[RMDB]
RNA sequence: GGGAACGACUCGAGUAGAGUCGAAAACUCUGCUAAUUCGUUAGCAGAGGUACACUGGGACGGGUCGCGAGGGGGAUACUCGCGGUCCCAAGAAGAAUCCAGCAAGCACAUUAUUCGUAAUGUGCAAUAAAAUAUCAUUGUUCGCAAUGAUAUUUUAAAAAGAAACAACAACAACAAC
Reactivity to DMS in 0.01 (KOAc 150mM, MgCl2 10mM, bicine 150mM(pH8.5), 24C), signal-to-noise 9, nucleotides 027 to 126: c000u000c000u000g000c000u000a010a020u000u010c180g020u000u000a000g010c000a010g000a010g000g010u010a050c140a160c020u000g000g000g010a100c120g010g010g010u000c010g010c000g010a020g010g000g020g020g010a130u010a040c000u000c000g010c000g010g010u000c000c000c040a040a080g000a130a100g010a120a080u000c000c000a080g010c230a090a150g010c000a000c000a010u000u000a040u000u010c180g010u000a010a010u000g010u000g010c000a070a040
Reactivity to 2A3 in 0.01 (KOAc 150mM, MgCl2 10mM, bicine 150mM(pH8.5), 24C), signal-to-noise 5, nucleotides 027 to 126: c000u000c000u000g000c010u000a020a020u070u090c190g070u070u020a000g000c000a000g000a000g000g010u030a040c090a010c040u020g010g000g050a030c030g010g000g050u040c000g000c000g010a010g040g030g030g050g050a060u160a230c000u010c000g000c000g000g020u030c000c000c000a000a010g060a040a010g040a020a030u050c010c000a000g040c080a140a040g000c000a000c000a010u000u030a020u070u080c150g040u030a010a000u010g000u010g000c000a000a000
An RNA of 177 nucleotides, treated with DMS and 2A3 and read out base by base. The DMS profile rests on 23,026 reads. DMS adducts were read by reverse transcription with MarathonRT. The data come from the RNA Mapping Database (RMDB), library M2PK50. The reactions ran in a buffer of 150 mM KOAc, 10 mM MgCl2 and 150 mM bicine (pH 8.5), at 24 C.